[RMDB]
RNA sequence: GGGAACGACUCGAGUAGAGUCGAAAAACGGGCUAGUGUCGCAAGACCGGUAGCAAUACCGACAGAGGUCAUAUACGUCAGUUAAGCCUGUCCGGCGUCACGACGGACAGGUCGAAAAUCAAGUGAAUCGCCGUAACGGAGCGUGUUCGUCCGCGACGUAAUGCCAGAUGUUCGCAUCUGGCAUUACAAAAGAAACAACAACAACAAC
Reactivity to DMS in 0.01 (KOAc 150mM, MgCl2 10mM, bicine 150mM(pH8.5), 24C), signal-to-noise 2, nucleotides 027 to 156: a080c060g010g010g010c000u030a070g050u000g000u000c030g050c030a110a150g010a060c030c010g020g040u000a070g000c150a110a200u000a110c040c000g010a110c050a110g000a130g040g000u010c010a100u000a120u000a070c080g010u000c070a090g010u010u010a130a100g000c030c000u000g000u000c000c000g040g000c000g010u010c300a270c010g000a020c000g000g000a050c000a000g000g020u000c020g000a040a020a030a150u000c070a050a140g000u000g030a030a080u010c010g010c000c000g030u000a100a170c110g000g010a100g020c030g060u000g030u000u000c140g040u000c020c000g030c020g030a130c040
Reactivity to 2A3 in 0.01 (KOAc 150mM, MgCl2 10mM, bicine 150mM(pH8.5), 24C), signal-to-noise 3, nucleotides 027 to 156: a000c030g000g000g030c030u030a070g050u040g020u080c030g020c070a060a100g040a050c030c010g000g020u010a000g010c030a030a060u030a030c000c000g020a020c070a010g100a030g020g030u040c040a000u090a010u040a180c050g020u010c040a060g020u060u100a040a020g020c000c000u000g020u000c000c010g000g040c020g040u050c040a030c100g020a000c000g000g020a010c000a000g010g010u000c010g000a000a000a010a040u110c100a150a010g020u000g020a020a030u080c010g020c020c010g030u050a060a020c040g010g000a020g030c040g000u090g050u120u050c040g060u060c010c060g060c040g070a020c060